[RMDB]
Source: RMDB library OK3TST, as collected in RNAgym. Structure probing data (2A3) for a 207-nucleotide construct. For 2A3, 458 sequencing reads were counted. The reactions ran in a buffer of 150 mM KOAc, 10 mM MgCl2 and 150 mM bicine (pH 8.5), at 24 C. 2A3 adducts were read by reverse transcription with SuperScript II with manganese. Values cover nucleotides 27 to 156.
RNA sequence: GGGAACGACUCGAGUAGAGUCGAAAAACGCUUGUUUGAACGAUUUGAGCAUAAAAGUGUGUGUGGAACAAGAACUGUCAAUGCAAAAUUUGUUCGAUUUGGUGCCUUUGACAACAUUGGAAAAUCGAUUGCGCACAUCUAUCUACGGGUACUCGUCCAGUCUGUUUAGCUUCGGCUAAACAGACUGAAAAGAAACAACAACAACAAC
Reactivity to 2A3 in 0.01 (KOAc 150mM, MgCl2 10mM, bicine 150mM(pH8.5), 24C), signal-to-noise 1, nucleotides 027 to 156: a010c080g010c050u070u010g000u090u010u080g060a030a050c050g030a080u000u000u130g020a030g000c060a030u130a100a050a060a110g030u010g010u010g010u050g000u050g080g060a080a000c060a190a060g050a110a020c040u030g120u180c060a060a000u010g020c010a100a120a070a070u070u060u050g100u050u100c080g070a130u060u020u120g010g000u040g010c010c000u000u000u000g050a030c020a060a000c000a100u030u050g040g120a000a050a050a100u080c050g100a120u010u090g020c010g000c010a040c030a050u080c030u050a040u030c000u040a070c030g000g050g000u000a010c020u010c020g030u000c010